[RMDB]
RNA sequence: GGGAACGACUCGAGUAGAGUCGAAAAAAUCUUUAGCAAGUAAAAUGGUGCCUAGUUUAUACUUUGGAAUUCAAUAUAAGAGUAGGCCAUGGUGUCCCCAAGGAACACCAGGGUGCCAACUGCUCCGCAGUGUCAAUCCAUUCGUGGAUUGACACUGAAAAGAAACAACAACAACAAC
Reactivity to DMS in 0.01 (KOAc 150mM, MgCl2 10mM, bicine 150mM(pH8.5), 24C), signal-to-noise 3, nucleotides 027 to 126: a050a020u000c030u000u000u000a070g010c050a080a040g000u010a030a050a150a090u010g020g020u000g000c020c010u000a060g020u000u000u010a090u000a080c060u000u010u010g010g000a100a120u010u000c060a050a080u010a080u000a090a090g000a100g040u000a020g000g010c030c110a070u010g010g010u000g010u000c020c000c070c210a120a130g030g020a010a020c010a010c000c000a050g020g010g020u000g020c050c030a030a110c060u000g000c030u010c110c190g010
Reactivity to 2A3 in 0.01 (KOAc 150mM, MgCl2 10mM, bicine 150mM(pH8.5), 24C), signal-to-noise 2, nucleotides 027 to 126: a040a000u070c080u120u090u030a090g030c050a190a010g020u190a130a100a120a120u070g000g000u030g040c000c000u010a070g050u050u110u090a180u060a080c020u090u040u080g030g060a100a130u120u140c040a130a040u170a040u090a300a060g000a020g070u050a040g030g000c010c010a070u070g000g000u000g000u020c080c000c020c010a080a160g040g020a080a000c020a000c010c000a000g050g020g000u010g040c030c000a000a020c030u020g010c000u000c070c030g010